Structure probing data (2A3) for a 177-nucleotide construct. It was measured as part of the RMDB library OK1LIB. The reactions ran in a buffer of 150 mM KOAc, 10 mM MgCl2 and 150 mM bicine (pH 8.5), at 24 C.
[RMDB]
RNA sequence: GGGAACGACUCGAGUAGAGUCGAAAAGUGGGACGAGUGCACCCACAGUACUCGAAAGGUAGUUGCUACGGAAGCUACCAACCGUAGAAAGGAAUGGCAAAAGAGUUCAAGCUAUUCCAGAACUCAAGGGAUGGAUCAAGUUCGCUUGAUCCAUCCCAAAAGAAACAACAACAACAAC
Reactivity to 2A3 in 0.01 (KOAc 150mM, MgCl2 10mM, bicine 150mM(pH8.5), 24C), signal-to-noise 1, nucleotides 027 to 126: g000u000g010g000g000a040c000g000a050g050u300g150c130a010c000c000c000a030c000a000g010u050a040c000u000c020g090a010a080a020g000g090u030a000g000u040u060g180c000u000a000c010g220g000a170a060g050c000u040a150c010c000a050a000c000c090g000u000a080g030a030a000a030g000g020a000a000u000g000g000c010a010a010a300a000g100a000g060u230u110c210a010a090g000c000u000a000u000u000c000c000a000g090a000a000c090u090c120a050a050